[RMDB]
Conditions: 150 mM KOAc, 10 mM MgCl2 and 150 mM bicine (pH 8.5), 24 C. Structure probing data (2A3 and DMS) for a 207-nucleotide construct. For DMS the reverse transcriptase was MarathonRT. Values cover nucleotides 27 to 156. 2A3 adducts were read by reverse transcription with SuperScript II with manganese. The data come from the RNA Mapping Database (RMDB), library M2RFPK. The DMS profile rests on 5,600 reads.
RNA sequence: GGGAACGACUCGAGUAGAGUCGAAAAACGGUCGUACGCGACCGAGGCGCGGCUAGGUCGACGGACCGAACAAUGGCAUCCCGCAUUCUGCCAUCCCCCGCGCAGCUUCUUCUCAAACGGUGCGGAAAAAAGUAGGACACCUUCGGGUGUCCUACAAGCGUAAUAGUAUGUUCGCAUACUAUUACGCAAAAGAAACAACAACAACAAC
Reactivity to 2A3 in 0.01 (KOAc 150mM, MgCl2 10mM, bicine 150mM(pH8.5), 24C), signal-to-noise 4, nucleotides 027 to 156: a000c010g000g000u020c010g020u070a060c240g010c010g100a000c010c000g000a050g010g000c010g000c010g010g020c070u040a020g000g010u020c030g090a190c180g160g030a000c000c000g000a020a020c050a020a030u010g000g000c000a020u130c050c000c000g010c000a010u300u050c010u030g000c000c000a010u020c010c020c000c000c000g000c040g010c010a030g030c040u170u080c010u090u040c020u070c050a080a080a030c060g000g000u010g000c000g000g000a010a030a020a030a000a050g000u010a000g000g000a000c000a000c010c000u040u070c220g030g010g000u000g000u000c000c000u000a010c000a000a000
Reactivity to DMS in 0.01 (KOAc 150mM, MgCl2 10mM, bicine 150mM(pH8.5), 24C), signal-to-noise 2, nucleotides 027 to 156: a090c040g010g010u020c000g020u000a090c150g010c030g000a010c000c000g020a030g020g000c040g040c040g030g000c060u000a090g020g010u000c000g010a150c220g000g020a050c030c000g000a100a050c140a090a050u000g010g010c010a090u000c040c000c030g020c030a080u000u000c050u000g010c010c000a060u000c010c060c020c010c020g000c020g030c010a040g000c060u000u000c070u010u000c090u000c040a110a040a070c040g080g050u000g010c020g000g000a000a040a040a050a100a180g010u000a000g000g000a010c000a010c000c010u000u000c300g060g000g030u010g000u000c000c000u000a000c000a000a070